[RMDB]
Structure probing data (DMS and 2A3) for a 207-nucleotide construct.
The reactions ran in a buffer of 150 mM KOAc, 10 mM MgCl2 and 150 mM bicine (pH 8.5), at 24 C.
RNA sequence: GGGAACGACUCGAGUAGAGUCGAAAAUAUCUAGCACGUUCAUGUGACUGUAAGUUUAUCAUCUUGGAUCACAUCAGUAUCGUUGUAUCAGAUCAUGCUAAGGAUGAACGUAAGGCACUGGAUGAGAUUGCUACCAAGCUUAAGACAUUAACAGUGGAAACCAUGUCACAUUCGUGUGACAUGGUUUAAAAGAAACAACAACAACAAC
Reactivity to DMS in 0.01 (KOAc 150mM, MgCl2 10mM, bicine 150mM(pH8.5), 24C), signal-to-noise 3, nucleotides 027 to 156: u010a110u000c030u000a060g030c000a060c060g030u000u000c030a040u000g030u000g020a020c000u000g020u010a070a140g000u010u000u000a060u010c100a080u000c030u010u000g020g020a080u000c030a130c080a050u000c050a140g020u010a040u000c110g040u000u010g010u000a090u010c060a150g000a050u000c080a090u010g020c040u020a060a050g020g000a070u000g010a030a060c050g010u000a110a100g010g000c000a020c030u000g010g020a030u000g020a070g020a110u000u000g020c030u000a120c060c050a020a220g040c080u010u000a080a120g020a080c080a070u000u000a090a110c070a100g010u000g000g000
Reactivity to 2A3 in 0.01 (KOAc 150mM, MgCl2 10mM, bicine 150mM(pH8.5), 24C), signal-to-noise 3, nucleotides 027 to 156: u100a020u040c040u010a010g030c010a000c050g020u050u040c050a090u250g030u000g170a240c020u020g040u140a070a100g010u020u030u030a120u080c080a050u060c010u060u050g030g010a010u080c020a030c030a040u010c060a090g200u240a070u170c070g130u110u130g040u120a030u080c040a010g030a020u000c000a040u140g020c030u050a020a020g000g020a000u020g020a010a000c020g070u090a000a030g030g000c020a020c020u000g000g000a000u000g000a000g020a040u040u100g000c000u000a040c030c010a070a040g040c010u110u150a070a000g040a060c060a060u160u160a090a020c050a070g040u040g050g110